[RMDB]
RNA sequence: GGGAACGACUCGAGUAGAGUCGAAAAGAGUGAACAAGUGCCACGUACAGAUCAUGGACCUCGGGCACAUGUGUGACGCCACCAUGAGUUAUGAGUGCCCUAUGCUGGAUGAGGGAGUGGAACCAGAAUACGGGAUACUUUUCGAAGUAUCCCGUAUAAAAGAAACAACAACAACAAC
Reactivity to 2A3 in 0.01 (KOAc 150mM, MgCl2 10mM, bicine 150mM(pH8.5), 24C), signal-to-noise 1, nucleotides 027 to 126: g040a010g040u100g000a060a030c040a150a040g010u010g100c000c000a080c060g030u070a060c050a070g050a170u150c020a060u080g010g000a030c010c060u010c050g000g040g020c020a020c000a030u080g130u020g020u020g100a120c090g000c050c000a000c020c000a010u020g050a000g070u100u090a220u130g010a000g020u100g060c000c000c000u040a030u100g010c020u030g090g090a110u100g000a130g000g030g000a050g000u070g030g120a030a050c000c030a020g080a070
Reactivity to DMS in 0.01 (KOAc 150mM, MgCl2 10mM, bicine 150mM(pH8.5), 24C), signal-to-noise 5, nucleotides 027 to 126: g000a090g010u000g010a110a050c080a070a090g020u000g000c010c010a060c090g010u000a110c070a050g000a070u010c070a080u000g000g000a060c040c030u000c070g020g000g010c030a040c020a040u020g000u010g010u000g010a140c200g010c140c030a080c030c030a030u000g010a080g010u000u010a090u010g000a090g010u010g010c010c010c020u010a050u010g000c030u000g000g000a070u010g000a100g000g000g000a090g010u000g010g010a080a100c030c050a090g020a130
An RNA of 177 nucleotides, treated with 2A3 and DMS and read out base by base.
2A3 is a SHAPE reagent: it acylates the 2'-hydroxyl of flexible nucleotides of all four kinds.
For 2A3, 930 sequencing reads were counted.
For DMS the reverse transcriptase was MarathonRT.
The data come from the RNA Mapping Database (RMDB), library OK2TRN.
The RNA was probed in 150 mM KOAc, 10 mM MgCl2 and 150 mM bicine (pH 8.5) at 24 C.
2A3 adducts were read by reverse transcription with SuperScript II with manganese.